[RMDB]
RNA sequence: GGGAACGACUCGAGUAGAGUCGAAAAUUACAGACUCGGAAGGAGAAACUGUCAUCCCAGUCAAUCCAAUUGGGAUGCCCUGGACCUGACAUGUGCACUUGGAAAGAGUAACAUGAAGCUCAGAAUUGGGGUGUAGUCAAUACUCCCAAAUAAAAAGCAUGGUAUUUCUCUUCGGAGAAAUACCAUGAAAAGAAACAACAACAACAAC
Reactivity to 2A3 in 0.01 (KOAc 150mM, MgCl2 10mM, bicine 150mM(pH8.5), 24C), signal-to-noise 3, nucleotides 027 to 156: u070u020a030c010a040g090a300c010u020c050g110g170a140a050g170g010a030g010a030a120a020c020u000g010u020c000a010u000c020c000c000a010g060u080c060a020a120u050c100c040a030a070u060u010g000g000g010a010u010g010c000c010c000u060g020g030a060c000c020u020g020a010c000a020u020g020u040g000c060a020c020u020u030g060g090a170a110a030g030a030g020u020a040a000c010a020u020g040a060a020g030c000u000c030a080g050a160a240u070u040g010g000g030g020u080g020u020a030g060u110c080a000a090u020a030c010u010c000c020c030a050a090a020u090a040a080a020a020a000g050
Reactivity to DMS in 0.01 (KOAc 150mM, MgCl2 10mM, bicine 150mM(pH8.5), 24C), signal-to-noise 1, nucleotides 027 to 156: u010u000a090c020a130g020a090c030u010c000g010g030a130a090g080g010a100g000a110a080a090c010u000g000u010c010a030u010c000c030c010a080g000u000c030a170a190u000c210c150a130a090u000u010g020g020g060a080u010g020c050c030c030u000g030g000a130c060c010u000g000a140c030a000u000g030u000g000c060a000c030u000u020g020g020a170a100a210g010a040g000u000a000a030c020a030u000g020a130a060g010c080u000c020a040g000a160a160u000u000g010g000g000g010u010g010u000a020g050u000c180a090a060u000a030c030u010c000c000c010a010a060a090u000a010a110a110a140a160g000